[RMDB]
RNA sequence: GGGAACGACUCGAGUAGAGUCGAAAACGUCAUCCGUGUUUUUUUGACAAAGGUGAGGAUGAACAGCGGCUCAAUCGCGGGUUACACGCGCGCGGCGUAAACCGCGUGAUCCUGGAUAGUCGUCCGGGAGUCCUACGUAGUUCGCUACGUAGGACUCAAAAGAAACAACAACAACAAC
Reactivity to 2A3 in 0.01 (KOAc 150mM, MgCl2 10mM, bicine 150mM(pH8.5), 24C), signal-to-noise 5, nucleotides 027 to 126: c050g020u020c010a000u010c010c020g020u020g120u130u010u000u010u010u030u230g160a120c150a050a080a020g150g060u130g090a060g000g020a040u030g020a030a010c000a020g030c000g010g010c010u010c000a050a070u040c030g000c020g080g020g000u100u180a100c080a010c100g080c010g000c010g000c000g020g050c040g100u180a080a120a060c010c000g000c000g000u000g010a010u050c010c000u000g010g040a070u090a130g050u030c050g010u010c000c000g020g040
Reactivity to DMS in 0.01 (KOAc 150mM, MgCl2 10mM, bicine 150mM(pH8.5), 24C), signal-to-noise 2, nucleotides 027 to 126: c200g020u010c000a000u000c000c020g030u030g020u000u000u020u030u040u060u000g000a150c210a060a030a000g010g010u030g010a140g000g000a000u010g000a030a020c040a100g000c040g000g000c000u000c000a080a100u010c040g020c010g010g040g000u000u000a100c120a040c160g040c030g040c080g000c000g000g030c130g000u050a030a060a230c000c000g000c020g010u010g000a080u020c010c000u000g000g020a110u070a090g000u000c050g000u000c000c000g010g000